[RMDB]
RNA sequence: GGGAACGACUCGAGUAGAGUCGAAAACAGAGUAAGAGUAUUCUUCUAAGACAGCAGAGCAGCGUCUUUUUACAACCAAGUGCGCUCACCUUGAUACCACAAUGAACACCCUGUAAUGUGGGCUGGACGCACAACGAUAGUUCGCUAUCGUUGUGCGAAAAGAAACAACAACAACAAC
Reactivity to 2A3 in 0.01 (KOAc 150mM, MgCl2 10mM, bicine 150mM(pH8.5), 24C), signal-to-noise 1, nucleotides 027 to 126: c030a000g160a010g070u180a090a040g050a020g120u060a270u220u040c030u050u020c020u080a090a040g070a100c070a100g000c100a050g010a020g140c070a010g000c040g000u040c000u090u110u010u020u110a030c010a020a000c070c000a050a040g060u020g090c010g000c000u010c010a010c000c000u060u070g060a030u120a200c010c010a020c030a040a130u130g030a110a010c000a090c060c020c010u030g040u100a100a110u070g030u030g030g020g000c010u010g000g030a000
Reactivity to DMS in 0.01 (KOAc 150mM, MgCl2 10mM, bicine 150mM(pH8.5), 24C), signal-to-noise 1, nucleotides 027 to 126: c130a100g010a110g000u010a050a030g040a120g040u010a080u000u000c000u010u000c060u020a120a070g010a090c060a080g010c040a090g000a070g000c130a060g000c060g000u000c000u000u020u000u000u000a080c110a120a080c130c080a010a010g000u010g020c070g070c100u010c010a080c070c040u010u000g010a110u000a070c010c000a050c050a030a080u000g000a130a050c210a070c000c000c000u000g000u000a060a130u000g000u000g010g010g000c070u000g000g000a180
The record gives the reactivity of an RNA of 177 nucleotides to 2A3 and DMS. For DMS, 815 sequencing reads were counted. For 2A3 the reverse transcriptase was SuperScript II with manganese.